RNA sequence: GGGAACGACUCGAGUAGAGUCGAAAAGUGAGUAAAGGAAGGGCAAUAGGAACAGAGGCAGCCUUGGUCUUCCUCAUUCACCUGCUGUUUUAGACACCACUGGCUGCAAUUGCCCACAGUUAGUUACAGUAUAGAUCCCUUUCGAGGGAUCUAUACUAAAAGAAACAACAACAACAAC
Reactivity to DMS in 0.01 (KOAc 150mM, MgCl2 10mM, bicine 150mM(pH8.5), 24C), signal-to-noise 4, nucleotides 027 to 126: g000u010g000a050g010u000a050a090a100g020g020a100a110g020g000g020c020a020a040u000a110g020g030a100a090c170a120g000a100g000g020c030a050g010c020c020u000u000g010g000u000c090u010u010c050c010u000c100a040u000u000c050a050c060c130u010g020c080u000g010u000u000u010u000a070g000a110c280a070c040c040a060c180u000g000g000c000u000g010c020a050a040u000u000g000c000c010c030a090c100a030g010u000u000a070g010u010u000a070c110
Reactivity to 2A3 in 0.01 (KOAc 150mM, MgCl2 10mM, bicine 150mM(pH8.5), 24C), signal-to-noise 1, nucleotides 027 to 126: g050u060g010a020g060u090a080a060a030g080g120a040a130g000g010g040c020a020a020u110a130g090g070a110a030c040a030g130a060g180g010c010a000g000c030c020u010u030g020g010u070c030u060u070c020c000u020c010a010u050u010c010a040c030c030u060g000c050u070g090u040u030u030u080a020g000a030c040a010c020c030a010c040u040g010g000c010u000g010c000a010a010u000u020g020c000c000c000a000c000a000g020u030u070a010g030u080u090a030c010
Structure probing data (DMS and 2A3) for a 177-nucleotide construct. The reactions ran in a buffer of 150 mM KOAc, 10 mM MgCl2 and 150 mM bicine (pH 8.5), at 24 C.